Overview:
Structure probing data (2A3 and DMS) for a 177-nucleotide construct. Source: RMDB library OK1LIB, as collected in RNAgym. DMS adducts were read by reverse transcription with MarathonRT. The reactions ran in a buffer of 150 mM KOAc, 10 mM MgCl2 and 150 mM bicine (pH 8.5), at 24 C. 2A3 adducts were read by reverse transcription with SuperScript II with manganese.
RNA sequence: GGGAACGACUCGAGUAGAGUCGAAAAACAUAAUGGGUAGUAGAUUCUGGGAGUCACGGUCUCUACUAUCUAUUAUGAGCACUACAUGUAGACUAGACUGUGAUUCCCAGAGUCUACAUGUGGUGUAGGAUCUGUAUGUAUUCGUACAUGCAGAUCCAAAAGAAACAACAACAACAAC
Reactivity to 2A3 in 0.01 (KOAc 150mM, MgCl2 10mM, bicine 150mM(pH8.5), 24C), signal-to-noise 5, nucleotides 027 to 126: a000c030a020u140a070a050u090g050g010g030u040a020g000u000a000g010a000u000u000c000u000g000g010g020a000g040u030c010a000c010g000g000u000c010u000c000u010a010c010u010a020u010c010u000a020u040u030a030u040g000a010g020c050a020c070u090a020c010a030u030g000u000a000g000a030c020u010a010g010a020c000u010g010u010g010a040u010u000c000c000c000a000g010a000g000u000c000u000a000c000a000u000g000u010g000g010u030g010u020a040
Reactivity to DMS in 0.01 (KOAc 150mM, MgCl2 10mM, bicine 150mM(pH8.5), 24C), signal-to-noise 6, nucleotides 027 to 126: a090c050a060u020a060a070u020g000g000g000u030a080g000u000a010g000a010u000u000c000u000g000g000g010a000g010u000c010a010c000g000g000u000c010u000c170u020a050c130u020a100u000c010u010a020u000u040a040u020g000a100g020c150a080c170u020a090c060a030u010g000u000a000g000a090c240u010a070g000a050c010u000g010u000g000a010u000u000c000c000c000a010g000a000g000u000c000u000a000c000a020u010g010u010g010g010u000g020u000a110